[RMDB]
RNA sequence: GGGAACGACUCGAGUAGAGUCGAAAAGAAAGAAAGAAAGAAAUCUGACAGAAUGACGGAUUCGAUCGUAGUGGUCGGCGGGCCACCACGUCAUUCCUUCGCACUGUCUCCGGGCAGACCGCCAUAAAAAAGCGGAUCUACUUCGGUAGAUCCGCAAGUAGUUACGUCUCUUCGGAGACGUAACUACAAAAGAAACAACAACAACAAC
Reactivity to 2A3 in 0.01 (KOAc 150mM, MgCl2 10mM, bicine 150mM(pH8.5), 24C), signal-to-noise 2, nucleotides 027 to 156: g070a000a030a030g090a050a100a010g070a010a140a010g030a000a060a030u120c080u070g020a050c050a070g070a110a190u060g010a070c080g000g020a090u120u170c210g050a090u170c020g020u050a060g000u000g060g000u030c060g020g120c030g000g010g010c000c000a000c010c050a050c000g020u020c000a010u050u000c030c010u130u140c040g040c030a000c040u000g000u000c010u000c040c030g060g000g000c010a010g040a080c000c020g020c010c010a110u260a010a020a000a040a000a000g000c020g010g000a010u000c000u000a000c000u000u010c130g010g000u010a000g000a010u020c000c000g000c000a000a000